Chemical mapping of a 177-nucleotide RNA with DMS. Reactivities are given for positions 27 through 126. DMS adducts were read by reverse transcription with MarathonRT. It was measured as part of the RMDB library OK2TRN. Conditions: 150 mM KOAc, 10 mM MgCl2 and 150 mM bicine (pH 8.5), 24 C.
[RMDB]
RNA sequence: GGGAACGACUCGAGUAGAGUCGAAAAGCUGACGGCCGCCCGCGACAGCGCCGUCGCCGAGGCCGAGAGGCUGCGCGAACAGGUGACCGAGCUGUCCGCUGAGCGCAACUAUGCAGUCGCCAACAAGAGUAUUAUCGCUGUUCGCAGCGAUAAUACUAAAAGAAACAACAACAACAAC
Reactivity to DMS in 0.01 (KOAc 150mM, MgCl2 10mM, bicine 150mM(pH8.5), 24C), signal-to-noise 1, nucleotides 027 to 126: g000c070u000g000a190c050g010g070c140c020g030c020c020c150g020c040g000a020c030a210g040c010g040c050c130g020u010c010g010c010c020g010a160g030g020c020c010g000a250g000a160g000g000c010u000g020c100g020c000g010a120a080c060a040g000g010u000g010a020c070c070g020a110g000c100u010g020u010c010c080g000c010u000g050a090g000c000g020c040a070a060c060u000a100u010g030c050a070g000u000c010g000c000c130a090a090c140a080a190g000